Record summary: The data come from the RNA Mapping Database (RMDB), library OK2TST. This 177-nucleotide RNA was probed chemically with DMS and 2A3.
[RMDB]
RNA sequence: GGGAACGACUCGAGUAGAGUCGAAAAUGCUUCUAUACCCAGAGAGUCUUAUUAUAUGCACAAUGCACUCUCUGUCAUACACUAUAUUUGUAUGAUUUUUUUUUUAAUUGUGCUAUAUGAUGCUGCAUGCCUGAGUAUUAUUCGUAAUACUCAGGCAAAAAGAAACAACAACAACAAC
Reactivity to DMS in 0.01 (KOAc 150mM, MgCl2 10mM, bicine 150mM(pH8.5), 24C), signal-to-noise 2, nucleotides 027 to 126: u020g000c060u000u000c060u000a120u000a140c020c010c000a140g000a070g010a050g000u000c120u020u000a070u000u000a040u000a030u010g020c000a010c020a010a010u000g000c210a080c140u000c040u000c070u000g010u000c000a000u000a000c000a040c230u000a150u000a120u000u010u000g000u000a010u000g000a000u000u000u010u000u000u010u000u010u000u000a050a050u000u000g000u000g010c000u010a050u000a010u000g000a150u000g000c040u000g010c070a140
Reactivity to 2A3 in 0.01 (KOAc 150mM, MgCl2 10mM, bicine 150mM(pH8.5), 24C), signal-to-noise 1, nucleotides 027 to 126: u080g040c000u140u010c010u050a190u080a110c000c000c020a010g010a000g000a020g040u000c100u190u090a070u030u120a050u060a010u070g000c020a000c000a000a050u130g060c050a030c060u000c000u030c020u020g030u000c020a030u000a000c010a010c020u110a080u100a150u300u210u100g030u000a000u000g000a040u100u070u010u020u050u000u020u000u000u140a110a030u070u020g020u040g030c000u000a000u000a020u120g060a030u070g050c010u030g000c030a070
For 2A3 the reverse transcriptase was SuperScript II with manganese.